[RMDB]
RNA sequence: GGGAACGACUCGAGUAGAGUCGAAAACGUGUGAGGCCAACAUCAAAGAUGCGUACCUAGCUGCGUUUCAACCUGCGUGGGUUGAGGCGGCUUAGCGGAUUAGGGCGUUCUGCCCCAGUGGUACCAUUACCCUAUGCAAAGUCUGCAUGCAGGCAGGGACUCUACCAAUCUUCGGAUUGGUAGAGUCAAAAGAAACAACAACAACAAC
Reactivity to 2A3 in 0.01 (KOAc 150mM, MgCl2 10mM, bicine 150mM(pH8.5), 24C), signal-to-noise 4, nucleotides 027 to 156: c090g040u040g010u020g030a060g040g020c060c040a060a050c020a070u140c110a120a110a050g110a010u040g050c090g040u070a080c000c010u020a020g030c000u060g010c010g020u000u040u030c000a000a010c000c020u220g130c190g220u300g070g000g000u000u010g000a000g000g000c040g030g020c040u040u040a010g000c030g030g090a060u090u180a060g010g010g010c020g130u290u090c110u270g010c010c000c000c000a040g070u020g040g010u030a080c000c000a000u000u070a090c000c000c010u050a050u090g040c060a090a070a060g060u050c020u020g010c000a030u080g020c040a040g070g010c010a010g040g020
Reactivity to DMS in 0.01 (KOAc 150mM, MgCl2 10mM, bicine 150mM(pH8.5), 24C), signal-to-noise 1, nucleotides 027 to 156: c010g020u000g020u000g010a130g000g000c000c040a160a060c000a120u000c100a090a180a210g000a100u000g010c040g050u000a010c010c000u000a070g030c010u000g030c000g030u000u000u020c040a020a020c000c000u000g030c260g000u000g010g030g030u020u030g010a040g000g010c030g010g000c030u010u000a010g040c030g010g030a230u000u000a110g000g010g000c000g010u030u010c040u010g000c000c010c000c030a030g040u010g000g030u000a050c030c060a130u000u000a150c030c010c000u000a050u000g000c030a080a080a170g000u010c070u020g060c070a190u000g020c050a130g020g010c090a090g010g000

Conditions: 150 mM KOAc, 10 mM MgCl2 and 150 mM bicine (pH 8.5), 24 C.
The record gives the reactivity of an RNA of 207 nucleotides to 2A3 and DMS.
For DMS the reverse transcriptase was MarathonRT.